[RMDB]
RNA sequence: GGGAACGACUCGAGUAGAGUCGAAAAGAUAUGGAACCUCCACUCUGCGGAGACUAUUCGGAAACGAACGAAUCUCCGAACUACAGAGCGGAGGUUCCUAAGUCAAACGAGAAGUUCGCUUCUCGAACAUGUCCGAACAGUUCGCUGUUCGGACAUGAAAAGAAACAACAACAACAAC
Reactivity to DMS in 0.01 (KOAc 150mM, MgCl2 10mM, bicine 150mM(pH8.5), 24C), signal-to-noise 1, nucleotides 027 to 126: g000a110u000a300u000g000g000a000a020c010c000u000c000c010a040c000u000c020u000g000c020g000g000a000g010a020c050u000a280u000u020c000g030g000a090a090a240c020g050a000a060c050g040a030a060u000c000u000c000c000g000a050a000c120u000a300c030a000g000a000g010c020g010g000a000g000g000u000u000c000c000u000a030a050g020u010c040a140a040a240c020g030a050g000a040a030g030u000u000c300g030c020u000u000c000u020c000g020a060a160
An RNA of 177 nucleotides, treated with DMS and read out base by base. The DMS profile rests on 651 reads. Conditions: 150 mM KOAc, 10 mM MgCl2 and 150 mM bicine (pH 8.5), 24 C.